The data come from the RNA Mapping Database (RMDB), library OK1LIB.
An RNA of 177 nucleotides, treated with 2A3 and DMS and read out base by base.
The reactions ran in a buffer of 150 mM KOAc, 10 mM MgCl2 and 150 mM bicine (pH 8.5), at 24 C.
Values are in units of 0.01, from 0 to 300, in steps of 10.
RNA sequence: GGGAACGACUCGAGUAGAGUCGAAAAGAAGCACGUUUUUGAUAAUCCACGGCGAAUGCCAGAUUAUCUUGUAGUUCGCUACCUGUAUAUGGAGGCGUAUGCCGUGCCAUAUACGUUUUCGUGCGAAGGGUAACCUAUGGUUCGCCAUAGGUUACCCAAAAGAAACAACAACAACAAC
Reactivity to 2A3 in 0.01 (KOAc 150mM, MgCl2 10mM, bicine 150mM(pH8.5), 24C), signal-to-noise 3, nucleotides 027 to 126: g090a050a000g010c000a000c010g010u000u000u070u140u120g030a010u010a020a000u000c020c020a180c150g010g020c090g070a280a090u300g020c010c010a020g010a020u020u030a020u060c000u010u020g000u000a020g000u010u020c150g050c090u020a060c000c000u030g020u000a000u000a000u000g060g000a030g010g000c090g120u190a080u300g000c010c000g090u090g110c000c000a000u000a000u010a000c010g010u080u010u000u060c030g000u010g000c020g040a110a110
Reactivity to DMS in 0.01 (KOAc 150mM, MgCl2 10mM, bicine 150mM(pH8.5), 24C), signal-to-noise 2, nucleotides 027 to 126: g000a150a150g000c000a000c010g020u010u010u040u020u010g000a000u000a000a010u010c010c070a190c200g000g000c010g010a090a040u050g000c030c000a090g000a030u000u000a000u010c010u010u030g000u000a030g010u010u040c180g030c010u010a020c020c260u060g010u000a000u000a000u000g000g000a190g000g000c000g030u000a070u090g040c020c000g010u040g020c030c000a000u010a010u010a000c000g000u010u000u010u010c020g010u010g000c010g040a050a080